[RMDB]
RNA sequence: GGGAACGACUCGAGUAGAGUCGAAAAGGUGCCCUAUUCGAGGCACUGCAGUCUCGAUAGAAAGGCUAAGAACGUCGCGAUGACGUAAGGUGGGACUUUUCCUUCCGGAACCUAGCGGUUGGUUCCGCAUCCGUGGACAGUUCGCUGUCCACGGAUGAAAAGAAACAACAACAACAAC
Reactivity to DMS in 0.01 (KOAc 150mM, MgCl2 10mM, bicine 150mM(pH8.5), 24C), signal-to-noise 2, nucleotides 027 to 126: g000g000u000g000c000c010c050u000a130u010u000c010g020a040g010g010c010a090c200u000g000c220a100g010u000c000u000c000g000a030u000a040g010a040a070a130g010g000c040u010a060a100g020a070a030c040g020u010c020g060c160g000a110u020g010a010c000g000u000a050a130g010g000u000g000g010g000a120c070u000u000u020u000c020c000u000u000c120c000g010g000a010a030c050c020u000a130g000c090g000g000u010u010g020g000u000u000c000c000g010
Reactivity to 2A3 in 0.01 (KOAc 150mM, MgCl2 10mM, bicine 150mM(pH8.5), 24C), signal-to-noise 1, nucleotides 027 to 126: g060g000u080g010c010c000c020u060a090u020u110c000g040a010g010g070c010a010c110u040g030c010a000g000u000c020u020c040g020a020u000a040g070a040a070a000g030g000c080u070a050a050g110a190a010c010g000u010c020g070c150g170a120u270g010a020c020g000u040a000a060g100g060u060g010g050g020a000c000u060u010u000u040c010c000u030u050c030c000g000g040a020a000c010c020u050a070g140c070g240g000u100u020g030g000u000u000c020c000g010